RNA sequence: GGGAACGACUCGAGUAGAGUCGAAAAUGAGCAAUGAAAUGGCUCAUUAUGCUUGCGAUUGCUGGGAUGCCGAAAUUCAAUGCUCUUACGGCUGGAUCGAGUGUGUAGGUUGCGCUGAUCGUAGUGCCUAUGAUCUUAGCGUUCACAGUAAAGCUAAUCACCAUUAUUACUUCGGUAAUAAUGGUGAAAAAGAAACAACAACAACAAC
Reactivity to 2A3 in 0.01 (KOAc 150mM, MgCl2 10mM, bicine 150mM(pH8.5), 24C), signal-to-noise 6, nucleotides 027 to 156: u130g000a010g000c030a010a070u110g070a100a040a070u200g040g000c010u020c030a020u070u100a090u130g030c030u070u070g060c060g140a260u090u180g010c010u030g020g020g080a070u170g010c020c000g070a100a090a050u070u040c030a020a050u050g020c010u020c000u040u070a050c040g010g000c000u020g020g030a050u030c020g020a000g030u060g030u050g040u090a050g020g080u110u130g020c010g000c010u030g030a030u040c020g040u030a020g030u030g240c000c010u050a060u050g020a010u010c020u060u110a010g000c010g020u070u070c060a060c010a060g080u130a030a060a000g000c030u050a070a030
Reactivity to DMS in 0.01 (KOAc 150mM, MgCl2 10mM, bicine 150mM(pH8.5), 24C), signal-to-noise 3, nucleotides 027 to 156: u000g010a010g000c000a090a180u010g000a070a110a300u010g010g000c000u000c020a050u000u000a100u010g010c030u000u010g010c080g020a150u010u000g020c010u000g000g020g010a080u000g020c000c000g000a050a060a100u000u000c040a070a130u010g010c010u010c040u000u000a150c040g010g050c040u000g000g010a150u000c010g010a100g020u000g030u000g040u000a130g030g010u010u000g020c000g030c060u010g010a070u000c050g030u010a060g020u010g030c080c040u000a060u000g020a060u010c020u000u010a120g010c000g030u000u000c030a050c040a120g010u000a050a070a090g020c050u000a070a300
Overview
An RNA of 207 nucleotides, treated with 2A3 and DMS and read out base by base. Reactivities are given for positions 27 through 156. The 2A3 profile rests on 4,592 reads.